RNA sequence: GGGAACGACUCGAGUAGAGUCGAAAAGAUAUGGAGCUGACCCAGUCACUCUUCAACAGCUCGGAAACGAGACAUGAAGAAAUACACUGCAGCUCCUAAGUCAAACUAGGAUGUUCGCAUCCUAGAAUCGCGUAAUGUAGUUCGCUACAUUACGCGAAAAAGAAACAACAACAACAAC
Reactivity to 2A3 in 0.01 (KOAc 150mM, MgCl2 10mM, bicine 150mM(pH8.5), 24C), signal-to-noise 2, nucleotides 027 to 126: g020a020u080a050u150g050g010a010g030c020u030g040a170c030c190c020a010g010u060c010a050c100u060c010u020u020c040a140a120c040a190g060c010u000c010g020g010a050a080a000c000g000a000g030a030c050a080u140g010a010a000g030a070a180a030u180a010c130a010c010u030g000c070a000g000c000u010c000c000u020a070a000g010u040c060a020a060a170c010u000a000g000g000a010u010g070u120u060c300g050c160a040u020c000c020u000a010g020a050a090
Reactivity to DMS in 0.01 (KOAc 150mM, MgCl2 10mM, bicine 150mM(pH8.5), 24C), signal-to-noise 2, nucleotides 027 to 126: g000a040u000a270u000g020g000a030g010c040u000g020a140c220c160c060a030g000u000c200a110c130u000c010u010u000c000a020a120c190a150g010c000u020c000g030g000a030a040a150c000g000a020g010a040c080a240u010g000a010a020g000a000a110a120u000a170c270a030c010u000g000c020a000g000c000u000c000c010u000a010a120g000u000c070a140a040a300c010u000a010g000g030a030u000g020u020u010c180g040c020a000u000c000c000u010a010g000a040a060
Conditions: 150 mM KOAc, 10 mM MgCl2 and 150 mM bicine (pH 8.5), 24 C.
Structure probing data (2A3 and DMS) for a 177-nucleotide construct.
For DMS, 885 sequencing reads were counted.
Reactivities are rounded to 0.1 and cut off at 0 and 3.
Source: RMDB library TTRDEL, as collected in RNAgym.